[RMDB]
RNA sequence: GGGAACGACUCGAGUAGAGUCGAAAAGAUAUGGACGUGGGGCAGCAACAGCCUGUUGGUCGGAAACGACCACAGGACAUGCUGCUCACGUCCUAAGUCAAAACUAAGGACCUUCGGGUCCUUAGAAGUAUAAGUUUAUGUUCGCAUAAACUUAUACAAAAGAAACAACAACAACAAC
Reactivity to DMS in 0.01 (KOAc 150mM, MgCl2 10mM, bicine 150mM(pH8.5), 24C), signal-to-noise 8, nucleotides 027 to 126: g010a020u000a040u010g000g000a020c000g030u000g010g010g010g020c000a010g020c000a150a060c250a140g010c000c000u000g010u010u010g040g010u000c000g020g000a010a010a030c000g010a010c000c000a010c000a000g010g010a010c050a180u010g020c000u000g000c000u000c000a000c000g010u000c000c000u000a000a040g000u000c010a120a100a130a250c010u000a010a010g000g000a020c000c000u000u020c250g030g010g020u000c000c000u000u000a000g010a050a130
Reactivity to 2A3 in 0.01 (KOAc 150mM, MgCl2 10mM, bicine 150mM(pH8.5), 24C), signal-to-noise 5, nucleotides 027 to 126: g010a000u020a010u030g000g010a000c020g010u020g030g120g150g190c020a000g000c080a170a180c060a190g010c020c010u040g030u210u290g020g000u000c010g000g000a020a000a000c000g000a000c000c020a010c010a000g000g000a000c020a080u300g000c000u000g000c000u000c000a000c000g000u000c000c000u000a010a000g000u000c010a000a010a080a110c010u000a000a000g010g000a010c010c000u040u160c300g150g000g000u000c000c000u000u000a000g000a000a000